[RMDB]
RNA sequence: GGGAACGACUCGAGUAGAGUCGAAAAUAUGGGCAGUUCGCUGCCCAUACGAGCGGAGUCCGGCACUAUGAGCCCGCAGCGUUGGUGCGUAGCCCCGGUGCAGAGACCAAGCCUUCGGGCUUGGUAACUUUUUGCGAAUUUUCGAAUUCGCAAAAAGAAAAGAAACAACAACAACAAC
Reactivity to DMS in 0.01 (KOAc 150mM, MgCl2 10mM, bicine 150mM(pH8.5), 24C), signal-to-noise 1, nucleotides 027 to 126: u000a000u010g000g000g020c000a010g000u000u000c200g030c020u010g000c000c010c000a010u000a000c090g000a110g010c060g000g010a170g010u000c010c040g010g020c010a050c040u000a090u020g000a170g010c020c060c030g000c030a140g020c060g020u020u010g020g030u010g000c000g020u000a120g010c010c040c060c080g000g040u000g010c080a150g000a090g010a020c000c000a000a000g010c000c000u000u010c220g010g010g010c000u000u010g000g010u000a000a020